[RMDB]
RNA sequence: GGGAACGACUCGAGUAGAGUCGAAAAGGGCGAUACCGGGCCCGAUACCGGAAUUAGUAGUUUUCUACGAGAGGCCCAAUCUGCGGCCGAAUGCAGUGUAGGUCGAAUCGAGGACCGAGACUCGAUAAUUACGUCGAUAGAUGGACGAUUACAUCAAGAUUACGAGUAUCUUCGGAUACUCGUAAUCAAAAGAAACAACAACAACAAC
Reactivity to 2A3 in 0.01 (KOAc 150mM, MgCl2 10mM, bicine 150mM(pH8.5), 24C), signal-to-noise 2, nucleotides 027 to 156: g000g000g000c000g000a050u040a060c020c000g000g010g040c000c000c010g060a000u020a080c050c000g010g100a040a030u190u120a060g000u020a000g030u150u180u170u110c070u020a010c020g000a010g000a060g100g000c000c000c090a020a050u030c000u030g000c010g070g000c110c110g000a020a010u130g000c000a010g040u010g020u120a060g000g000u060c100g000a030a010u010c000g000a000g050g010a030c040c040g070a010g010a030c030u010c000g010a000u060a090a170u160u250a040c030g010u010c000g040a070u050a060g070a050u110g080g000a030c020g100a070u040u140a080c040a100u190c080a030a110
Reactivity to DMS in 0.01 (KOAc 150mM, MgCl2 10mM, bicine 150mM(pH8.5), 24C), signal-to-noise 2, nucleotides 027 to 156: g000g010g010c020g030a270u000a040c050c020g030g020g010c010c000c110g000a080u010a080c010c010g050g020a070a120u000u040a040g040u010a020g010u010u000u000u010c020u000a060c050g030a160g020a180g040g000c000c000c010a210a150u010c040u000g020c090g000g010c050c170g000a080a070u000g000c000a070g020u000g000u000a100g040g050u000c020g010a060a070u010c000g000a160g000g010a120c040c060g000a210g010a080c000u010c010g020a120u000a070a130u000u000a110c080g000u000c020g030a180u010a160g010a090u000g000g000a080c070g000a080u010u000a050c040a140u010c030a060a300